[RMDB]
RNA sequence: GGGAACGACUCGAGUAGAGUCGAAAACAACUGUCGCAGGUCCCUUCGACGCGACGCCAGCCAGGACCUCACUGCCGACGUCAGUAGCCGUGCAUCGCUCUGACCUCUCCCUACGUAGGUAGGUGCGAGUAUCCGUACGAUUCGUCGUACGGAUACUAAAAGAAACAACAACAACAAC
Reactivity to DMS in 0.01 (KOAc 150mM, MgCl2 10mM, bicine 150mM(pH8.5), 24C), signal-to-noise 4, nucleotides 027 to 126: c120a060a130c130u040g000u000c010g010c050a130g010g020u000c010c010c010u010u020c090g020a130c110g000c030g000a020c030g020c080c070a070g020c030c040a050g000g020a050c050c050u000c050a090c020u010g010c040c040g000a060c110g000u000c050a070g000u040a100g010c030c070g010u020g000c080a070u020c060g000c010u010c010u010g000a070c030c020u010c020u020c010c010c010u000a060c040g010u020a050g000g020u010a030g000g010u010g000c090g010
Reactivity to 2A3 in 0.01 (KOAc 150mM, MgCl2 10mM, bicine 150mM(pH8.5), 24C), signal-to-noise 6, nucleotides 027 to 126: c050a020a020c050u130g020u070c020g020c050a040g010g090u080c020c000c000u050u100c050g040a030c020g000c010g040a020c020g000c020c010a020g000c010c000a010g010g040a090c010c000u020c020a040c020u050g010c030c030g040a070c070g030u040c020a040g020u080a020g020c050c030g080u090g040c020a070u130c020g010c000u010c020u010g060a070c000c010u020c030u040c000c010c000u040a040c040g130u140a060g140g030u010a010g020g040u050g040c040g030